Annotation:
This 207-nucleotide RNA was probed chemically with 2A3. Conditions: 150 mM KOAc, 10 mM MgCl2 and 150 mM bicine (pH 8.5), 24 C. Source: RMDB library OK3TST, as collected in RNAgym.

RNA sequence: GGGAACGACUCGAGUAGAGUCGAAAAGCAGAUUCUGGCUAGUGCUUUCAAUCAAGCUAUUGGUAACAUUACACAGUCAUUUGGUAAGGUUAAUGAUGCUAUACAUCAAACAUCACGAGGUCUUGCUACUGUUGCUAAAGCAUUGGCAAAAGUGCAAGAAAUUCCAGUUCUUCGGAACUGGAAUUUCAAAAGAAACAACAACAACAAC
Reactivity to 2A3 in 0.01 (KOAc 150mM, MgCl2 10mM, bicine 150mM(pH8.5), 24C), signal-to-noise 1, nucleotides 027 to 156: g040c040a000g040a100u070u080c000u130g030g010c010u020a020g030u000g080c010u010u000u150c070a110a130u070c100a100a010g030c050u110a060u160u160g010g000u020a030a020c010a080u050u120a010c100a010c040a130g040u130c070a130u140u210u110g000g010u070a040a000g030g000u020u070a040a090u050g000a000u010g020c040u100a050u040a280c040a120u120c060a080a080a000c010a000u010c010a010c090g050a080g140g000u050c000u040u010g050c030u020a080c010u020g010u010u010g030c000u000a000a010a010g010c010a080u030u020g000g000c000a000a030a090a000g070u040g000c040a090a070